About this RNA: The record gives the reactivity of an RNA of 177 nucleotides to 2A3 and DMS. Conditions: 150 mM KOAc, 10 mM MgCl2 and 150 mM bicine (pH 8.5), 24 C. Source: RMDB library OK2TST, as collected in RNAgym. Reactivities are given for positions 27 through 126. For DMS, 2,887 sequencing reads were counted.

RNA sequence: GGGAACGACUCGAGUAGAGUCGAAAACGAAGGUAUUUGCGCUGGAUGUCGCGGCGCGUCAUCGUGUGCAGUUCGCCAUGCCGGAAGCCGAUGCGGUAGCGCUGAUAAAACAACUUGAGAGGCGUUAGCCUGGGGCAUGAUUCGUCAUGCCCCAGGCAAAAGAAACAACAACAACAAC
Reactivity to 2A3 in 0.01 (KOAc 150mM, MgCl2 10mM, bicine 150mM(pH8.5), 24C), signal-to-noise 2, nucleotides 027 to 126: c030g030a070a000g090g000u080a100u080u150u150g000c020g000c000u050g150g040a110u030g030u110c020g000c060g140g050c100g000c010g030u000c000a010u030c020g040u010g030u070g030c030a040g020u030u050c000g040c000c030a040u090g010c000c000g030g010a040a020g020c020c020g050a090u090g040c030g020g040u030a010g020c020g000c020u020g020a010u080a070a120a010a010c080a020a060c040u060u110g050a030g000a010g090g040c000g040u020u070a010
Reactivity to DMS in 0.01 (KOAc 150mM, MgCl2 10mM, bicine 150mM(pH8.5), 24C), signal-to-noise 3, nucleotides 027 to 126: c060g010a150a080g010g030u000a030u000u000u000g010c030g010c000u000g010g010a100u010g000u000c040g020c030g010g040c070g030c030g020u000c040a040u000c070g010u020g020u000g010c040a090g000u000u000c090g000c030c030a100u000g010c060c030g010g020a110a130g020c030c020g010a100u000g040c060g000g010u000a050g020c050g000c030u000g000a120u020a030a040a080a100c140a070a080c120u000u000g010a120g010a180g000g000c030g000u000u010a120